[RMDB]
RNA sequence: GGGAACGACUCGAGUAGAGUCGAAAAGGGAGGGGAGUGAAAUAGAACCUGAAACCGUGUGCCUACAACCGGUCGAAGCACAUUAACGUGUGACGACGUGCUUUUUGCCAGCGAGUUACGGUAUGUACAAAUCAACAUCUUUCGAGAUGUUGAUUUGAAAAGAAACAACAACAACAAC
Reactivity to DMS in 0.01 (KOAc 150mM, MgCl2 10mM, bicine 150mM(pH8.5), 24C), signal-to-noise 9, nucleotides 027 to 126: g010g010g010a100g010g000g000g000a080g020u010g000a050a090a140u010a090g010a060a100c050c030u010g010a100a090a090c050c030g010u010g010u010g000c030c040u000a060c100a050a070c060c040g010g020u000c050g010a050a280g010c010a010c010a120u010u010a090a050c230g010u000g010u000g000a300c040g010a040c040g010u010g010c050u000u000u010u000u000g010c040c040a100g010c050g010a090g010u000u000a100c090g010g010u000a040u010g010u010a120
Reactivity to 2A3 in 0.01 (KOAc 150mM, MgCl2 10mM, bicine 150mM(pH8.5), 24C), signal-to-noise 7, nucleotides 027 to 126: g040g010g020a080g020g020g010g010a070g040u080g050a020a040a030u160a060g070a040a030c010c030u030g030a110a010a010c010c010g020u040g010u060g040c000c010u060a060c030a070a040c010c020g080g000u030c010g020a020a000g010c010a000c010a050u190u220a170a030c140g010u020g010u020g040a010c010g000a010c010g020u080g010c030u070u140u070u100u160g030c020c000a020g030c030g040a080g060u040u060a030c030g000g010u050a100u100g040u010a060